[RMDB]
RNA sequence: GGGAACGACUCGAGUAGAGUCGAAAAUCUGGAGCAUUUUUUUUUGUGUGUGUGCCAGAAAGUAAGGAAGUGCUCAAAGAACAAUAAGAACAAGUCAAAAUGACAUAGGAACUAUUUUGAGGGCUCCGGAAACAUUAUCUUUCGAGAUAAUGUUUCCAAAAGAAACAACAACAACAAC
Reactivity to DMS in 0.01 (KOAc 150mM, MgCl2 10mM, bicine 150mM(pH8.5), 24C), signal-to-noise 1, nucleotides 027 to 126: u000c050u000g010g010a060g000c040a000u000u000u000u000u000u000u010u000u000g020u010g030u010g030u020g010u000g000c010c010a040g000a060a010a050g010u020a120a070g000g010a070a030g000u000g000c010u000c050a050a010a030g010a090a090c160a050a020u030a050a060g000a130a100c070a070a100g040u020c010a030a030a120a110u010g020a050c030a080u010a120g020g000a100a100c070u000a030u000u000u000u000g020a030g010g010g010c060u030c080c110
Reactivity to 2A3 in 0.01 (KOAc 150mM, MgCl2 10mM, bicine 150mM(pH8.5), 24C), signal-to-noise 1, nucleotides 027 to 126: u000c000u020g010g000a000g030c010a000u000u020u030u000u030u040u110u300u220g180u070g020u000g020u000g000u030g120c000c000a030g010a020a050a000g070u050a000a000g000g010a070a000g030u050g010c030u020c030a030a070a000g140a050a010c010a000a080u300a150a020g050a010a030c090a100a000g220u000c000a040a220a170a220u090g040a020c000a000u180a020g130g060a040a000c060u080a070u070u060u000u000g040a010g000g000g020c060u000c040c150
An RNA of 177 nucleotides, treated with DMS and 2A3 and read out base by base. For DMS the reverse transcriptase was MarathonRT. The 2A3 profile rests on 628 reads. The DMS profile rests on 953 reads. It was measured as part of the RMDB library OK2TST.